The data come from the RNA Mapping Database (RMDB), library RFM100. The record gives the reactivity of an RNA of 177 nucleotides to DMS and 2A3. For 2A3 the reverse transcriptase was SuperScript II with manganese. 2A3 is a SHAPE reagent: it acylates the 2'-hydroxyl of flexible nucleotides of all four kinds. Conditions: 150 mM KOAc, 10 mM MgCl2 and 150 mM bicine (pH 8.5), 24 C.

[RMDB]
RNA sequence: GGGAACGACUCGAGUAGAGUCGAAAAUCCUUUGGACCUUGCAGGUAUGUGGAUCCUGGUAGUAGUAGCAGCAAAGUGAGGUGAGAAUCCUUACCGCCGGAGGGGCUAGGGUUCCUUGGCAAUGUUCCGGCUAACUAAUCUUCGGAUUAGUUAGCCGAAAAGAAACAACAACAACAAC
Reactivity to DMS in 0.01 (KOAc 150mM, MgCl2 10mM, bicine 150mM(pH8.5), 24C), signal-to-noise 1, nucleotides 027 to 126: u020c000c000u020u040u030g000g000a030c070c100u010u000g000c070a050g000g010u020a030u020g020u020g000g020a070u000c040c010u030g000g000u010a120g030u030a030g000u020a110g050c030a110g030c070a040a070a080g020u020g010a030g000g030u000g000a220g000a160a140u000c050c000u020u000a000c020c080g000c000c030g010g000a030g020g020g000g040c000u000a050g010g050g030u020u000c020c000u000u010g000g010c060a060a050u030g000u020u000c040
Reactivity to 2A3 in 0.01 (KOAc 150mM, MgCl2 10mM, bicine 150mM(pH8.5), 24C), signal-to-noise 2, nucleotides 027 to 126: u050c010c000u110u030u070g020g010a020c000c020u020u000g010c010a040g060g060u140a090u060g130u160g030g050a030u010c000c010u010g040g020u020a050g010u020a010g000u040a020g040c060a000g000c010a050a100a030g080u000g000a000g020g000u020g010a040g020a000a020u010c010c000u000u010a030c000c020g010c010c000g060g070a080g010g040g030g010c010u010a030g130g050g000u010u080c010c000u030u020g110g000c040a050a060u030g040u060u010c020